[RMDB]
Annotation: The record gives the reactivity of an RNA of 177 nucleotides to DMS and 2A3. For 2A3, 1,752 sequencing reads were counted. The data come from the RNA Mapping Database (RMDB), library RFM100. The reactions ran in a buffer of 150 mM KOAc, 10 mM MgCl2 and 150 mM bicine (pH 8.5), at 24 C.
RNA sequence: GGGAACGACUCGAGUAGAGUCGAAAACUUUCUUAUAACUCAGGCCAACUGGCAUAGCAAGUAAAACUGUACUGAUCUAAAUGAAAAAUGUUUCUCUUCCUAAUAAUCGCAGGUCCUUCAAUGGACAUAAUUCUCCACGUUUCGACGUGGAGAAUUAAAAAGAAACAACAACAACAAC
Reactivity to DMS in 0.01 (KOAc 150mM, MgCl2 10mM, bicine 150mM(pH8.5), 24C), signal-to-noise 3, nucleotides 027 to 126: c140u000u000u020c030u000u000a110u030a130a160c170u000c010a080g000g000c010c000a190a100c120u070g000g030c030a180u010a060g040c130a000a030g010u000a110a040a120a110c100u030g000u000a290c040u000g000a050u020c060u020a010a080a080u060g000a000a060a040a060a080u080g010u000u000u000c010u000c090u000u000c000c000u040a040a040u060a060a030u040c060g020c100a070g000g010u000c000c000u000u000c250a080a050u020g000g040a000c010a080
Reactivity to 2A3 in 0.01 (KOAc 150mM, MgCl2 10mM, bicine 150mM(pH8.5), 24C), signal-to-noise 3, nucleotides 027 to 126: c000u030u090u000c030u040u120a110u050a220a010c030u060c050a020g100g000c040c020a120a080c200u110g040g000c000a030u050a030g040c030a090a010g020u120a020a060a080a040c030u070g010u060a050c000u020g070a080u000c030u060a040a170a170u090g110a100a000a000a030a050u130g010u000u030u030c010u000c000u050u070c030c000u180a270a210u170a100a000u140c040g000c050a020g000g050u000c000c030u070u150c020a100a160u160g000g000a000c000a010